The record gives the reactivity of an RNA of 177 nucleotides to 2A3 and DMS. The RNA was probed in 150 mM KOAc, 10 mM MgCl2 and 150 mM bicine (pH 8.5) at 24 C. For DMS the reverse transcriptase was MarathonRT.

[RMDB]
RNA sequence: GGGAACGACUCGAGUAGAGUCGAAAAGGCCAAAAGAGUUGGUGGGGGUGGGGGCGCAGCAUUGAGAUAAUUAGGACUAGCCAGGCACAAUGUCUCUCACCUGUGAUCCCAGCUACUCAGGAGGCUGGACCAUAAGAAAGUUCGCUUUCUUAUGGUCAAAAGAAACAACAACAACAAC
Reactivity to 2A3 in 0.01 (KOAc 150mM, MgCl2 10mM, bicine 150mM(pH8.5), 24C), signal-to-noise 3, nucleotides 027 to 126: g000g010c010c000a010a000a000a070g050a000g020u070u080g090g300u040g000g010g000g000g060u070g010g000g000g000g000c030g000c000a020g000c000a010u020u150g030a040g000a030u110a110a110u190u120a060g060g040a040c030u030a030g110c050c060a040g020g030c030a020c020a070a060u040g030u020c000u010c000u000c030a040c010c000u030g070u060g030a040u080c000c000c000a000g030c010u020a010c010u010c020a010g010g020a010g000g040c000u010g020
Reactivity to DMS in 0.01 (KOAc 150mM, MgCl2 10mM, bicine 150mM(pH8.5), 24C), signal-to-noise 5, nucleotides 027 to 126: g000g010c020c010a020a180a210a100g000a060g020u000u010g000g020u000g020g010g000g000g020u010g000g020g000g010g010c300g000c040a050g030c070a140u010u000g000a060g010a070u000a040a060u000u010a110g010g010a080c080u000a060g000c100c070a070g010g030c060a080c040a040a060u010g000u000c030u000c010u000c120a060c220c020u000g020u000g020a100u010c020c010c000a050g000c020u000a030c030u000c030a060g000g000a300g000g010c010u010g010